Background:
This 177-nucleotide RNA was probed chemically with 2A3. For 2A3 the reverse transcriptase was SuperScript II with manganese.

RNA sequence: GGGAACGACUCGAGUAGAGUCGAAAACAGCUCAUCGGUGCUGAUGCUUGAGGUUGUGUUUGACGGGCACACAUUGAUCUCUGCAAUUUAAUGCGUGGUGGCUGACAUUUCCAUGCAGCUUCCACAGGGCCUUGGUGCUAUUCGUAGCACCAAGGCCAAAAGAAACAACAACAACAAC
Reactivity to 2A3 in 0.01 (KOAc 150mM, MgCl2 10mM, bicine 150mM(pH8.5), 24C), signal-to-noise 1, nucleotides 027 to 126: c020a010g050c030u060c010a050u040c110g120g090u000g000c000u090g000a050u070g090c030u180u140g050a040g000g060u040u000g010u060g110u000u000u120g110a070c040g000g080g000c040a000c010a000c000a010u060u150g020a070u000c000u010c040u080g000c020a010a010u000u000u100a300a110u160g120c150g020u000g010g010u030g000g000c000u000g070a140c000a000u090u130u020c050c000a000u070g000c000a000g030c000u000u000c000c000a020c000a010g020
The reactions ran in a buffer of 150 mM KOAc, 10 mM MgCl2 and 150 mM bicine (pH 8.5), at 24 C. Values cover nucleotides 27 to 126.